[RMDB]
RNA sequence: GGGAACGACUCGAGUAGAGUCGAAAACAAAACGCAACUUGAAUUGGUUGACCUGCUGAAUUCAUUGAUGACAACCAUAACGACUCUGGAAGAUCGAUGGUUGUUUGCAUUGCUUUACCGUGUAGGAUGGUUAGAUCACAAGUUUGUAGCGGAUCAACUUUUACGCUGCAUUCGUGCAGCGUAAAAGAAAAGAAACAACAACAACAAC
Reactivity to 2A3 in 0.01 (KOAc 150mM, MgCl2 10mM, bicine 150mM(pH8.5), 24C), signal-to-noise 2, nucleotides 027 to 156: c010a030a090a000a010c070g020c010a010a030c030u050u040g020a110a240u160u030g040g010u060u070g090a110c010c010u080g000c000u000g060a150a070u010u040c080a040u030u110g110a110u160g020a170c000a010a010c000c000a020u170a190a120c030g010a010c000u070c170u300g160g080a120a070g080a180u020c000g000a000u030g000g000u000u000g000u000u000u050g000c000a020u050u060g000c000u130u120u110a190c100c060g070u020g030u130a000g040g030a000u010g000g040u040u020a130g010a060u000c020a020c010a070a010g020u000u060u220g160u120a060g080c060g000g000a050u150c010a010a090